[RMDB]
RNA sequence: GGGAACGACUCGAGUAGAGUCGAAAAUCUAGGGUUCCGCAUGUCAAUUGACAUGGACUGGUCCGAGAGAAAACACAUACGCGUAAAUAGAAGCGCGUAUGCACACGUAGGGAAAAAAGCCCGGGAGAAUGGGAUUAUUAGUUCGCUAAUAAUCCAACCAGUUAGCAAUGUUCGCAUUGCUAACUGGAAAAGAAACAACAACAACAAC
Reactivity to 2A3 in 0.01 (KOAc 150mM, MgCl2 10mM, bicine 150mM(pH8.5), 24C), signal-to-noise 1, nucleotides 027 to 156: u010c000u010a000g010g010g000u000u010c010c000g000c010a010u010g000u020c030a220a300u200u300g000a030c000a010u000g030g020a070c020u050g010g030u000c000c000g010a000g000a000g000a020a090a010a000c060a010c020a000u010a000c000g030c030g000u070a010a300a080u190a270g130a270a110g010c000g010c010g000u000a000u010g010c030a020c000a000c070g060u100a100g000g000g000a020a210a120a070a050a010g010c020c000c010g030g090g000a090g030a060a080u220g010g000g000a000u010u000a000u000u000a000g020u030u020c200g000c110u000a000a000u010a000a000u000c000c000a000a040

The data come from the RNA Mapping Database (RMDB), library M2RFPK. An RNA of 207 nucleotides, treated with 2A3 and read out base by base. The RNA was probed in 150 mM KOAc, 10 mM MgCl2 and 150 mM bicine (pH 8.5) at 24 C. Values cover nucleotides 27 to 156.